An RNA of 177 nucleotides, treated with 2A3 and DMS and read out base by base. DMS adducts were read by reverse transcription with MarathonRT. Source: RMDB library OK2TST, as collected in RNAgym. The 2A3 profile rests on 3,335 reads. Conditions: 150 mM KOAc, 10 mM MgCl2 and 150 mM bicine (pH 8.5), 24 C. The DMS profile rests on 4,537 reads.
RNA sequence: GGGAACGACUCGAGUAGAGUCGAAAAGACACCAGUGAGGACGAGAACGUGUAUGAUUACAUCGACGGCGAUAGCAGCGACAGCGCCGACGACUACGAUAGCGAUUAUUUUACUGCUAACCGCGGCCACUCUAUCACCUGUUCGCAGGUGAUAGAGUAAAAGAAACAACAACAACAAC
Reactivity to 2A3 in 0.01 (KOAc 150mM, MgCl2 10mM, bicine 150mM(pH8.5), 24C), signal-to-noise 3, nucleotides 027 to 126: g050a020c040a050c020c010a020g050u050g070a050g000g030a030c060g010a030g020a120a030c070g030u050g040u060a060u140g130a110u080u100a040c030a070u060c050g060a050c010g000g010c010g050a040u060a060g010c020a010g060c010g090a070c060a040g030c020g010c040c000g060a080c020g020a000c040u100a030c040g090a060u070a010g030c030g010a010u000u070a070u040u230u090u090a080c020u050g030c010u000a060a030c040c040g010c000g020g000c010c030
Reactivity to DMS in 0.01 (KOAc 150mM, MgCl2 10mM, bicine 150mM(pH8.5), 24C), signal-to-noise 5, nucleotides 027 to 126: g000a130c100a110c040c020a080g010u010g010a070g020g000a070c080g000a120g010a070a060c100g020u000g010u000a040u000g020a130u000u010a070c130a110u000c030g020a120c070g000g000c030g000a070u010a070g020c050a070g020c040g020a090c150a090g000c030g000c010c020g000a090c040g000a060c120u000a060c100g010a120u010a040g020c020g000a060u010u000a140u000u000u000u010a070c070u000g010c050u000a050a050c080c030g000c030g000g000c070c080